[RMDB]
RNA sequence: GGGAACGACUCGAGUAGAGUCGAAAAGGAGCUCGAUGUAUGAUGGUCUCGGAUUGCGAUGGGACCACCCCUGUUGCAGUACCGAGGGGUAUCAACAUAGUGUUAUGUUGAUAUCAUACAUCGAGGAGAUAGGAUACUUAUUCGUGAGUGUUCUAUCAAAAGAAACAACAACAACAAC
Reactivity to DMS in 0.01 (KOAc 150mM, MgCl2 10mM, bicine 150mM(pH8.5), 24C), signal-to-noise 8, nucleotides 027 to 126: g010g010a110g010c010u000c000g020a010u000g000u000a000u000g000a010u000g010g000u000c000u000c000g000g010a180u020u050g010c160g010a250u050g000g000g000a030c030c030a020c030c020c000c000u000g010u010u020g010c130a090g010u020a110c090c100g000a020g010g000g010g000u000a010u000c000a000a000c000a010u000a020g020u050g010u040u000a000u000g010u000u000g000a010u000a010u000c000a000u000a000c000a000u000c000g000a000g000g010a070
Reactivity to 2A3 in 0.01 (KOAc 150mM, MgCl2 10mM, bicine 150mM(pH8.5), 24C), signal-to-noise 9, nucleotides 027 to 126: g170g020a070g050c000u000c000g000a000u000g000u000a000u000g010a010u020g020g040u010c000u000c010g040g050a120u090u230g080c080g040a060u140g010g000g010a030c020c010a030c010c010c000c000u030g060u140u110g070c100a060g050u100a200c020c050g050a020g000g000g000g010u020a000u010c000a000a000c010a000u020a020g300u280g160u300u060a030u000g000u000u000g000a000u000a000u010c000a000u000a000c000a000u000c000g000a000g000g000a010